[RMDB]
Notes:
An RNA of 177 nucleotides, treated with DMS and 2A3 and read out base by base. For 2A3, 1,979 sequencing reads were counted. For 2A3 the reverse transcriptase was SuperScript II with manganese.
RNA sequence: GGGAACGACUCGAGUAGAGUCGAAAAGGGAAGUAGGACUUCAACAUGGCGGCUGCGGCACUGGCGGUGGCUACGGUGACGGCCUGGCCCGGAGCGGGCAGAGUUGGAGGUGGUGGCGUUCGCUCUCCAUUUCUAAGCACUUCGGUGCUUAGAAAUGAAAAGAAACAACAACAACAAC
Reactivity to DMS in 0.01 (KOAc 150mM, MgCl2 10mM, bicine 150mM(pH8.5), 24C), signal-to-noise 3, nucleotides 027 to 126: g000g000g000a080a050g030u000a100g010g000a300c040u000u000c030a020a070c060a070u000g020g010c040g020g020c030u000g010c050g010g000c030a070c100u000g000g010c050g000g040u000g030g000c020u010a050c120g030g020u000g000a090c080g030g010c020c020u000g000g010c080c000c040g010g000a080g010c060g000g010g010c030a050g000a080g000u000u010g000g010a090g010g040u010g000g010u010g010g020c080g000u010u000c050g010c030u010c030u000c050
Reactivity to 2A3 in 0.01 (KOAc 150mM, MgCl2 10mM, bicine 150mM(pH8.5), 24C), signal-to-noise 1, nucleotides 027 to 126: g010g000g030a050a000g040u130a050g020g090a030c000u060u010c060a070a050c020a080u080g110g000c060g020g000c010u050g000c050g050g000c020a060c170u070g010g030c030g060g020u040g050g000c010u030a030c080g070g010u040g050a030c040g000g010c000c030u040g020g020c010c010c000g070g020a060g010c030g020g000g000c020a020g060a000g110u050u130g030g000a050g010g000u060g050g040u040g030g040c020g010u080u070c020g010c010u010c000u030c010